[RMDB]
Structure probing data (DMS and 2A3) for a 177-nucleotide construct. The 2A3 profile rests on 1,237 reads. As a SHAPE reagent, 2A3 marks flexible, mostly unpaired nucleotides at the ribose 2'-OH.
RNA sequence: GGGAACGACUCGAGUAGAGUCGAAAAAUACAUAAAGCUACACUAUAUACACCCAUAUAAGUAUGUAGUUCGUCAGCUCAGUUACCGCGUCUAUGUCUGUGGGGAAUAAAUCAACACGCUGUGUGGCGUCCUAGGGUGGAUUCGUCCACCCUAGGACAAAAGAAACAACAACAACAAC
Reactivity to DMS in 0.01 (KOAc 150mM, MgCl2 10mM, bicine 150mM(pH8.5), 24C), signal-to-noise 2, nucleotides 027 to 126: a030u000a100c080a080u120a170a080a050g000c020u030a010c060a070c010u000a070u020a080u000a000c100a100c150c110c080a050u030a150u080a060a050g000u030a020u000g000u020a040g010u040u000c140g060u000c060a040g070c010u000c030a020g000u000u060a090c020c020g000c010g000u010c020u000a040u020g000u010c120u000g030u000g000g000g000g030a010a050u000a070a050a090u000c090a040a040c110a020c050g000c120u000g040u000g010u010g000g020c080
Reactivity to 2A3 in 0.01 (KOAc 150mM, MgCl2 10mM, bicine 150mM(pH8.5), 24C), signal-to-noise 3, nucleotides 027 to 126: a000u080a010c040a050u160a100a130a020g000c000u060a000c010a000c000u000a000u000a000u000a130c050a080c040c040c000a050u060a030u000a180a080g000u040a000u060g010u000a000g010u040u100c050g000u020c080a030g010c000u000c010a020g020u020u110a020c000c000g010c030g020u020c080u010a060u100g060u020c000u000g040u030g020g000g010g030a060a020u090a130a040a150u090c010a000a080c010a030c120g110c110u030g030u030g040u080g150g000c040